[RMDB]
RNA sequence: GGGAACGACUCGAGUAGAGUCGAAAAGUAAAGGCCGAACGAGCGCUAAUGCGCAUGCUAGAAAAUGGUUGGCCAUCGUAGUGUGAGCAUGAGCACGAAAGAAACACACACAUGCACGUGCAAAAAACAUGUAGUCAUGUUUCGACAUGACUACAUGAAAAGAAACAACAACAACAAC
Reactivity to 2A3 in 0.01 (KOAc 150mM, MgCl2 10mM, bicine 150mM(pH8.5), 24C), signal-to-noise 5, nucleotides 027 to 126: g030u060a110a080a000g050g000c030c020g030a070a040c050g020a040g000c040g010c080u150a140a090u220g000c010g000c010a010u080g020c020u090a040g170a070a160a040a050u100g070g030u110u130g120g000c010c010a010u030c020g040u030a050g010u010g000u010g050a010g000c010a020u040g050a010g010c010a020c050g050a020a070a050g100a020a070a000c070a010c010a000c000a000c000a080u060g030c040a030c070g020u070g010c040a010a020a020a000a070a080
Reactivity to DMS in 0.01 (KOAc 150mM, MgCl2 10mM, bicine 150mM(pH8.5), 24C), signal-to-noise 5, nucleotides 027 to 126: g010u010a070a080a150g010g020c030c010g010a080a080c100g010a140g010c050g010c010u000a070a060u000g010c020g020c000a030u000g010c030u000a060g000a100a100a060a050u000g000g000u010u000g010g010c020c010a040u010c070g020u000a030g030u010g020u000g000a020g010c010a020u000g000a070g000c000a050c040g000a050a070a100g000a080a070a070c050a050c060a070c060a060c070a070u000g010c070a100c120g010u000g020c090a010a050a060a080a040a100
Chemical mapping of a 177-nucleotide RNA with 2A3 and DMS. In probing experiments dimethyl sulfate is read out at A N1 and C N3, which are open when not base-paired. The reactions ran in a buffer of 150 mM KOAc, 10 mM MgCl2 and 150 mM bicine (pH 8.5), at 24 C. Reactivities are given for positions 27 through 126. 2A3 adducts were read by reverse transcription with SuperScript II with manganese.